[RMDB]
Annotation: Chemical mapping of a 177-nucleotide RNA with 2A3 and DMS. The DMS profile rests on 23,878 reads.
RNA sequence: GGGAACGACUCGAGUAGAGUCGAAAAUAAGAGCAUGUACGAAUCACGAUAUCAGAGUUCCUGGUGAAUCCCGGGUACAAGGAAAGGUAUUAAUCUCCCACUGCGUUCCCUUGCAGUAGGGAUAUAAUCAUCCUUGUAUAUUCGUAUACAAGGAUGAAAAAGAAACAACAACAACAAC
Reactivity to 2A3 in 0.01 (KOAc 150mM, MgCl2 10mM, bicine 150mM(pH8.5), 24C), signal-to-noise 7, nucleotides 027 to 126: u140a020a040g040a020g050c060a050u090g030u120a040c050g060a090a070u090c060a030c110g040a030u030a020u100c030a010g040a010g170u030u030c000c000u020g030g020u060g090a110a060u100c010c010c000g030g010g000u040a030c020a040a030g080g030a120a060a030g050g000u050a060u070u090a150a100u030c020u000c050c000c000a000c000u000g000c010g030u040u050c020c000c000u000u040g000c010a000g000u130a130g000g000g000a010u020a010u010a020a010
Reactivity to DMS in 0.01 (KOAc 150mM, MgCl2 10mM, bicine 150mM(pH8.5), 24C), signal-to-noise 9, nucleotides 027 to 126: u010a070a090g010a080g010c070a050u000g010u000a040c060g010a100a070u000c060a080c090g010a100u000a040u000c040a080g010a200g000u000u000c020c010u000g000g010u000g000a110a100u000c130c020c020g010g010g010u000a020c050a070a080g000g000a040a070a070g010g000u000a040u010u000a070a090u010c110u000c000c000c010a050c010u000g000c000g010u000u000c010c020c020u000u010g010c010a010g010u000a080g030g000g000a020u010a010u010a080a130
Values cover nucleotides 27 to 126. 2A3 adducts were read by reverse transcription with SuperScript II with manganese.